RNA sequence: GGGAACGACUCGAGUAGAGUCGAAAAUACAAACCUAGUACAUAUUUGGAUAACGAUCAAAAACCCAUUUACGACCCUGAAUUAGCCAAUCGCGAUUCAGGUGGUACAUUGAAUUACAAGGAUUUUUGUGGUUAUUUAUGCGUACCGCGUAGUCGCACGUCCAGUUCUUUUUCGAAAGAACUGGACGAAAAGAAACAACAACAACAAC
Reactivity to 2A3 in 0.01 (KOAc 150mM, MgCl2 10mM, bicine 150mM(pH8.5), 24C), signal-to-noise 1, nucleotides 027 to 156: u170a020c040a000a080a040c000c000u090a010g090u090a040c070a070u180a100u120u160u130g000g020a070u100a030a160c100g060a110u070c040a010a000a000a000a000c000c000c010a000u040u030u030a070c070g010a020c000c000c000u020g020a000a000u000u030a050g000c020c030a090a150u240c110g000c010g010a000u000u000c000a020g000g000u020g030g000u020a020c010a100u070u100g150a150a010u090u120a060c120a060a080g120g030a130u020u000u020u000u000g000u050g140g000u030u020a060u040u070u060a050u000g010c020g040u060a090c050c090g050c040g130u090a050g070u030c020g000c130a050